[RMDB]
RNA sequence: GGGAACGACUCGAGUAGAGUCGAAAAUUAAAGAGCGUAGCACACACUCAGACUAAGUCUGACACACACAUACGCUAAUCAUCUCUGUCUGUGUUCGAGAUAUCGAUAAGUGUAUGAGAUGAAAAAAGAAUUGGUAGUACUUCGGUACUACCAAUUCAAAAGAAACAACAACAACAAC
Reactivity to DMS in 0.01 (KOAc 150mM, MgCl2 10mM, bicine 150mM(pH8.5), 24C), signal-to-noise 3, nucleotides 027 to 126: u000u000a060a100a170g010a130g000c010g010u000a080g000c060a050c040a040c080a160c220u000c010a010g020a020c010u010a100a180g020u000c000u000g000a050c060a020c050a040c060a030c070a110u000a010c000g010c020u000a090a060u010c010a020u000c000u000c000u000g000u000c070u000g020u010g020u010u000c030g000a010g000a110u010a050u010c020g010a040u000a090a080g000u000g040u000a070u000g000a010g020a010u010g000a010a070a110a030a050a040
Reactivity to 2A3 in 0.01 (KOAc 150mM, MgCl2 10mM, bicine 150mM(pH8.5), 24C), signal-to-noise 3, nucleotides 027 to 126: u170u100a110a060a040g120a020g010c000g000u030a020g010c090a020c000a010c000a020c070u030c010a020g010a010c050u190a250a040g030u010c010u020g010a000c010a000c000a000c000a000c010a120u030a070c000g000c050u040a050a080u030c010a000u000c000u000c010u030g070u020c010u040g110u050g090u100u030c000g020a030g020a160u110a100u170c000g010a010u030a150a030g030u040g020u060a070u050g010a000g000a010u020g070a090a000a030a010a010a010